[RMDB]
An RNA of 177 nucleotides, treated with DMS and 2A3 and read out base by base. The reactions ran in a buffer of 150 mM KOAc, 10 mM MgCl2 and 150 mM bicine (pH 8.5), at 24 C. In probing experiments dimethyl sulfate is read out at A N1 and C N3, which are open when not base-paired. It was measured as part of the RMDB library OK2TRN.

RNA sequence: GGGAACGACUCGAGUAGAGUCGAAAACGGUGGUGCUGUGCACCAAGGUUGCCAUGGGCACGGGCUACGGCUCGCAGCACUCCAUGGACCCGGCAGGCAUUUUCGCAACCGCCCCCGGCUGGCGCAAAAUUACUAUUAGGUUCGCCUAAUAGUAAUUAAAAGAAACAACAACAACAAC
Reactivity to DMS in 0.01 (KOAc 150mM, MgCl2 10mM, bicine 150mM(pH8.5), 24C), signal-to-noise 9, nucleotides 027 to 126: c090g010g020u000g010g020u000g010c060u000g020u000g020c020a060c040c030a210a050g010g010u000u010g010c010c010a030u000g010g000g010c040a220c020g000g000g010c010u000a090c180g040g010c010u000c020g010c070a100g020c050a140c180u000c020c010a040u000g000g000a090c090c010c020g000g010c150a230g000g000c020a070u000u000u010u000c090g010c050a100a060c030c020g000c040c020c030c020c020g010g000c040u000g010g010c070g010c130a050a070
Reactivity to 2A3 in 0.01 (KOAc 150mM, MgCl2 10mM, bicine 150mM(pH8.5), 24C), signal-to-noise 5, nucleotides 027 to 126: c040g020g020u050g010g030u030g010c030u080g050u080g040c030a050c080c020a010a020g040g000u050u140g080c010c010a010u020g000g020g000c010a010c010g000g010g000c010u030a040c230g130g000c000u000c010g000c030a060g010c010a070c070u030c010c000a010u010g020g000a020c010c010c000g010g010c020a030g030g000c010a010u070u060u150u260c070g010c050a090a050c000c010g010c020c010c000c000c000g010g030c050u060g040g010c040g010c060a070a170